Chemical mapping of a 177-nucleotide RNA with DMS and 2A3. The 2A3 profile rests on 1,573 reads. Values cover nucleotides 27 to 126. It was measured as part of the RMDB library OK1LIB.

RNA sequence: GGGAACGACUCGAGUAGAGUCGAAAAUGGUUAAUGUGCAAGCAAGACAACUACGAGACAUGCCCCCAGCCGCUGGUUUAUGUCUUUCCAGAAGUGAGGUGGCCGAGUUAUGCGGUACCCCGCAACGUAGCAUAGCACUGUUCGCAGUGCUAUGCUAAAAAGAAACAACAACAACAAC
Reactivity to DMS in 0.01 (KOAc 150mM, MgCl2 10mM, bicine 150mM(pH8.5), 24C), signal-to-noise 2, nucleotides 027 to 126: u000g040g010u010u000a050a060u010g030u020g000c060a060a140g000c060a070a100g020a050c060a120a110c090u000a110c090g000a090g000a040c110a080u040g010c020c020c000c050c030a090g010c030c060g010c030u000g000g000u000u020u010a010u010g020u000c050u000u000u010c050c000a100g000a080a150g040u000g000a050g000g000u000g000g030c040c010g010a180g030u020u040a040u040g030c000g010g000u010a040c050c010c000c030g000c030a050a060c170g010
Reactivity to 2A3 in 0.01 (KOAc 150mM, MgCl2 10mM, bicine 150mM(pH8.5), 24C), signal-to-noise 2, nucleotides 027 to 126: u110g020g020u040u050a050a000u060g050u050g150c040a030a000g020c010a090a040g050a100c010a070a050c080u120a010c040g010a020g060a090c030a030u220g010c010c010c000c000c000a000g060c060c020g060c070u020g010g060u020u060u100a050u130g070u000c000u030u010u020c030c000a040g020a170a010g100u060g080a050g170g000u110g020g000c000c010g010a050g020u220u110a070u230g050c000g000g070u260a260c000c050c000c000g050c010a020a050c050g070